An RNA of 177 nucleotides, treated with DMS and 2A3 and read out base by base. It was measured as part of the RMDB library M2PK50. Conditions: 150 mM KOAc, 10 mM MgCl2 and 150 mM bicine (pH 8.5), 24 C. For DMS, 18,200 sequencing reads were counted. For 2A3 the reverse transcriptase was SuperScript II with manganese. For DMS the reverse transcriptase was MarathonRT.

RNA sequence: GGGAACGACUCGAGUAGAGUCGAAAAUGUGACAUGUUCGCAUGUCACAAGCCAGGUAGUUCCUAUCUCAAUUACCUGUACAGGCCAUGGUCUGGAAAGGAAAGCUCUACCUAUUCGUAGGUAGAAAGUUACUACUAUCAUUCGUGAUAGUAGUAACAAAAGAAACAACAACAACAAC
Reactivity to DMS in 0.01 (KOAc 150mM, MgCl2 10mM, bicine 150mM(pH8.5), 24C), signal-to-noise 9, nucleotides 027 to 126: u000g020u000g000a010c000a000u000g010u000u010c240g030c010a000u000g000u000c000a000c000a030a070g010c090c040a120g000g010u000a060g010u000u000c030c020u000a090u010c120u010c130a100a080u000u000a070c010c000u000g010u000a200c030a010g010g010c010c050a090u010g060g020u000c000u000g000g010a070a150a040g000g010a090a110a120g000c160u000c000u000a000c000c000u000a020u000u010c180g020u000a000g000g000u000a000g000a020a040a070
Reactivity to 2A3 in 0.01 (KOAc 150mM, MgCl2 10mM, bicine 150mM(pH8.5), 24C), signal-to-noise 9, nucleotides 027 to 126: u060g000u000g000a000c000a000u000g020u040u090c260g000c120a000u000g000u000c000a000c000a000a000g050c010c020a050g050g040u070a020g030u040u040c020c010u070a140u120c100u020c060a090a300u190u130a130c000c000u010g020u070a020c010a000g000g000c020c030a160u300g080g000u000c010u010g040g000a110a020a020g030g000a080a020a010g030c020u000c000u010a000c010c000u010a020u030u070c250g040u020a000g000g000u000a000g010a010a020a000